[RMDB]
RNA sequence: GGGAACGACUCGAGUAGAGUCGAAAAGAUUAGGCAGAUAACAACUAUUACGCGUCUUGCCACUGUAUUGUAAAGUAAACAACAAGAUAUAAGUUUAAUACACCAACGCGACAAGAUGAAUCAGCAACAACCUGAUUCUGUUCGCAGAAUCAGGUUGAAAAGAAACAACAACAACAAC
Reactivity to 2A3 in 0.01 (KOAc 150mM, MgCl2 10mM, bicine 150mM(pH8.5), 24C), signal-to-noise 2, nucleotides 027 to 126: g040a010u200u150a020g020g040c030a010g050a150u070a130a040c050a060a010c070u060a060u160u080a140c020g020c000g020u000c010u100u000g000c000c000a020c050u070g050u050a120u070u030g090u020a080a100a180g030u070a060a080a020c090a040a000c010a020a070g080a030u060a000u060a150a000g010u000u020u160a100a040u050a000c040a000c000c030a080a000c000g010c000g050a010c010a030a000g050a060u080g000a030a030u030c010a010g070c020a000a090
Reactivity to DMS in 0.01 (KOAc 150mM, MgCl2 10mM, bicine 150mM(pH8.5), 24C), signal-to-noise 2, nucleotides 027 to 126: g000a050u000u000a050g000g010c130a050g010a040u010a030a040c100a080a120c060u000a050u000u010a080c130g000c050g000u000c030u000u000g000c020c040a040c150u000g010u000a070u000u000g000u000a110a100a130g020u000a000a060a070c080a090a180c130a060a100g000a100u010a110u000a040a080g010u000u000u040a020a060u010a060c020a000c150c080a020a020c050g010c020g020a040c040a060a060g000a030u010g010a020a050u000c100a060g030c130a060a100
The record gives the reactivity of an RNA of 177 nucleotides to 2A3 and DMS. The reactions ran in a buffer of 150 mM KOAc, 10 mM MgCl2 and 150 mM bicine (pH 8.5), at 24 C. Values cover nucleotides 27 to 126. DMS adducts were read by reverse transcription with MarathonRT. For 2A3, 958 sequencing reads were counted.